[RMDB]
RNA sequence: GGGAACGACUCGAGUAGAGUCGAAAAAGUUUUGCAGCCACCCGUAUUAAGUCUUUUGCAAACCAUCAGGUGUAUUCUGUAAUUUUAGCAAUAAACAGAUUUUUUUCCUUCAGUAUGCUAAAAUAAAGACUGAUAUAUUUUGGGAUGGUAGGUAUAGCAUCGCUGUAAAUUUCGAUUUACAGCGAUGAAAAGAAACAACAACAACAAC
Reactivity to DMS in 0.01 (KOAc 150mM, MgCl2 10mM, bicine 150mM(pH8.5), 24C), signal-to-noise 2, nucleotides 027 to 156: a130g020u010u000u000u010g030c010a270g000c000c000a020c030c000c020g000u000a040u000u000a110a060g030u000c000u000u010u000u000g010c090a070a160a110c090c050a240u000c070a150g020g010u000g020u000a050u010u010c040u000g020u010a070a050u000u000u000u000a060g010c000a050a130u010a070a070a090c110a070g020a020u000u010u000u000u000u000u000c040c050u000u000c060a140g020u000a120u000g010c010u000a010a010a010a050u000a060a020a060g000a050c010u000g000a110u000a020u000a090u000u000u010u010g030g030g010a010u000g020g030u000a030g030g000u000a050u010a060g020
Reactivity to 2A3 in 0.01 (KOAc 150mM, MgCl2 10mM, bicine 150mM(pH8.5), 24C), signal-to-noise 2, nucleotides 027 to 156: a000g030u010u020u060u220g020c030a040g030c000c000a010c000c000c000g020u020a010u030u000a090a000g010u000c010u000u080u080u140g050c020a090a150a130c030c030a040u160c120a090g000g010u090g040u110a130u200u000c010u010g080u040a060a110u040u090u040u090a030g030c010a000a120u080a060a120a010c030a030g000a000u150u000u040u020u000u170u140c000c000u020u050c020a040g010u060a030u060g010c010u050a080a040a020a070u120a010a020a010g000a010c000u000g000a000u000a000u010a030u170u160u140u150g050g000g000a060u030g020g000u040a160g000g090u130a070u040a170g000
The record gives the reactivity of an RNA of 207 nucleotides to DMS and 2A3.
The RNA was probed in 150 mM KOAc, 10 mM MgCl2 and 150 mM bicine (pH 8.5) at 24 C.
High DMS reactivity at an A or C suggests that its Watson-Crick edge is free.
For DMS the reverse transcriptase was MarathonRT.